[RMDB]
RNA sequence: GGGAACGACUCGAGUAGAGUCGAAAAGAAGAUGGAACCAGACGCCCACCCGGAACGGUGCCGACGAUGUAACGACCGUUUGACUUCGUGAUCGUGAUCUGAGUGAAGCCGGAAGCGCGAUUCAUGCGGAGGACGACGCGCCCGUUUGCGUGAAGGAGUCCUUUUACAUGUUCGCAUGUAAAAGGACAAAAGAAACAACAACAACAAC
Reactivity to 2A3 in 0.01 (KOAc 150mM, MgCl2 10mM, bicine 150mM(pH8.5), 24C), signal-to-noise 3, nucleotides 027 to 156: g090a020a000g040a050u140g050g040a040a050c030c010a010g040a020c040g040c000c010c010a030c000c010c050g030g020a030a010c000g000g040u080g070c090c020g050a100c040g090a120u170g040u170a030a040c010g050a090c040c030g000u010u010u030g050a040c010u030u020c050g030u040g040a080u010c030g020u000g010a090u010c070u070g030a070g070u190g110a080a010g040c050c020g000g050a060a050g060c020g000c000g010a030u100u090c040a040u130g020c020g000g010a000g060g000a030c010g000a000c010g040c020g000c000c020c080g030u050u070u100g050c020g040u110g040a060a020g060g010a060
Reactivity to DMS in 0.01 (KOAc 150mM, MgCl2 10mM, bicine 150mM(pH8.5), 24C), signal-to-noise 2, nucleotides 027 to 156: g040a060a120g000a140u010g010g020a070a120c030c010a090g000a140c050g010c000c060c000a070c030c020c000g030g000a110a070c070g020g010u010g060c000c020g020a070c060g020a080u000g020u000a110a140c080g010a060c030c010g010u010u000u010g010a150c060u000u000c020g030u000g000a050u010c030g050u000g000a130u010c000u010g000a130g000u010g010a090a130g020c130c060g000g000a140a070g030c030g000c030g030a090u010u000c090a110u000g010c050g010g020a080g000g020a110c100g090a110c090g040c100g020c050c010c050g000u000u000u010g020c020g060u010g020a160a100g000g010a300
Structure probing data (2A3 and DMS) for a 207-nucleotide construct. The RNA was probed in 150 mM KOAc, 10 mM MgCl2 and 150 mM bicine (pH 8.5) at 24 C.